Chemical mapping of a 207-nucleotide RNA with 2A3.
The data come from the RNA Mapping Database (RMDB), library M2RFPK.
High 2A3 reactivity points to a flexible backbone, as in loops and unpaired stretches.
The RNA was probed in 150 mM KOAc, 10 mM MgCl2 and 150 mM bicine (pH 8.5) at 24 C.
RNA sequence: GGGAACGACUCGAGUAGAGUCGAAAAGCAAGUCGCAUCGCAAAACCGCGGCAAGUGGAGUUAGCCAGAGGAGGCUGGGUUUUGGCUUCCUUAAGCAAUCGGUCACCGAGAAGGUGUGGUCGUUACCUAGACAGUUUUCUGUUCGCAGAAAACUGAAGAAUCGCAACAUCUUCGGAUGUUGCGAUUCAAAAGAAACAACAACAACAAC
Reactivity to 2A3 in 0.01 (KOAc 150mM, MgCl2 10mM, bicine 150mM(pH8.5), 24C), signal-to-noise 1, nucleotides 027 to 156: g040c010a070a020g010u040c010g040c020a030u030c040g030c110a120a060a030a080c120c110g030c000g000g010c060a100a050g040u010g040g010a050g030u090u130a050g040c000c010a050g010a030g060g010a020g000g020c000u000g000g130g070u030u070u140u140g040g040c000u020u000c020c000u010u000a170a000g010c020a010a110u070c010g000g050u080c000a010c020c030g000a070g030a250a010g010g000u050g020u060g060g000u010c000g000u000u030a200c000c000u000a070g020a050c000a000g000u010u000u000u000c000u000g040u040u050c280g010c030a000g000a000a000a000a000c020u000g000a000a010